[RMDB]
RNA sequence: GGGAACGACUCGAGUAGAGUCGAAAAAACAGUUUCGACUGUUUCGGAGCGUACUACACAUGGAACGAGGAUCAGAACUCCCCACCCACUUCCCAAAUAGGAAGUGGAGGUUCUGGGAGUUCUGAUGUGUAUCGCAACACGGGGUGUUCGCACCCAAACCUUAAGCAGCUUUCGAGCUGCUUAAGGUAAAAGAAACAACAACAACAAC
Reactivity to 2A3 in 0.01 (KOAc 150mM, MgCl2 10mM, bicine 150mM(pH8.5), 24C), signal-to-noise 6, nucleotides 027 to 156: a000a010c090a040g010u120u110u110c150g100a030c020u020g050u040u040u110c070g080g060a090g020c010g000u050a090c060u050a010c030a000c000a090u140g100g040a130a070c080g030a090g060g030a030u030c000a000g010a010a000c000u000c010c010c000c010a040c020c000c000a000c010u010u000c010c010c040a140a300a090u220a050g000g000a010a000g010u020g020g050a100g000g000u150u110c100u090g000g000g000a000g000u000u010c000u000g000a000u000g000u000g000u010a080u300c010g020c050a100a040c040a040c090g040g000g000g000u020g030u060u100c210g090c060a060c000c000c040a070a100
Reactivity to DMS in 0.01 (KOAc 150mM, MgCl2 10mM, bicine 150mM(pH8.5), 24C), signal-to-noise 1, nucleotides 027 to 156: a020a010c040a060g040u000u000u000c200g000a100c040u010g010u010u000u010c040g030g010a280g000c010g030u000a140c080u000a090c030a100c040a090u030g010g000a170a090c010g000a120g000g030a040u000c020a020g010a040a020c020u000c010c020c000c060a160c080c010c000a010c000u000u010c000c000c000a030a140a240u010a040g000g000a060a040g010u000g000g000a000g000g000u000u020c180u000g000g010g010a020g010u000u000c000u000g020a000u000g000u000g020u000a090u000c020g000c040a040a300c050a090c080g010g000g010g000u000g000u010u000c020g050c010a300c000c000c000a000a000
The record gives the reactivity of an RNA of 207 nucleotides to 2A3 and DMS. It was measured as part of the RMDB library RNAMAK. For DMS, 2,857 sequencing reads were counted. Values cover nucleotides 27 to 156. For DMS the reverse transcriptase was MarathonRT. For 2A3, 4,228 sequencing reads were counted. Conditions: 150 mM KOAc, 10 mM MgCl2 and 150 mM bicine (pH 8.5), 24 C.